[RMDB]
RNA sequence: GGGAACGACUCGAGUAGAGUCGAAAAGCACAACAUGUGUGGUGAGACUGAAGAAGAAAAGAUUCGAGUGGACAUCAUAGAGAACCAAGUAAUGGAUUUCCGCACACAACUGAUAAGGCUCUGUUACCCUGCUAAGUGAAUUCGUUCACUUAGCAGGAAAAGAAACAACAACAACAAC
Reactivity to DMS in 0.01 (KOAc 150mM, MgCl2 10mM, bicine 150mM(pH8.5), 24C), signal-to-noise 4, nucleotides 027 to 126: g000c030a040c030a100a130c130a080u000g020u000g030u000g000g020u010g000a130g010a080c030u000g010a110a080g000a080a060g010a070a090a080a100g000a100u010u010c030g000a140g010u010g000g010a090c100a050u000c070a050u010a080g010a200g010a040a070c080c030a060a080g020u000a070a080u000g000g000a130u000u000u000c020c020g000c070a040c090a040c080a040a040c100u010g000a090u010a040a080g010g000c090u000c060u010g010u000u000a130c150
Reactivity to 2A3 in 0.01 (KOAc 150mM, MgCl2 10mM, bicine 150mM(pH8.5), 24C), signal-to-noise 3, nucleotides 027 to 126: g030c010a010c000a070a110c080a140u130g020u000g030u040g010g060u050g040a070g020a010c060u110g030a070a020g050a090a010g090a040a270a000a040g090a020u090u100c030g010a010g040u070g010g030a070c030a070u060c000a000u140a080g060a000g020a050a030c020c020a030a030g050u100a100a100u050g050g010a040u030u100u000c020c000g000c010a010c000a000c000a060a100c040u020g020a080u040a130a030g030g000c010u000c030u020g050u080u040a080c010

Conditions: 150 mM KOAc, 10 mM MgCl2 and 150 mM bicine (pH 8.5), 24 C.
This 177-nucleotide RNA was probed chemically with DMS and 2A3.
The 2A3 profile rests on 2,983 reads.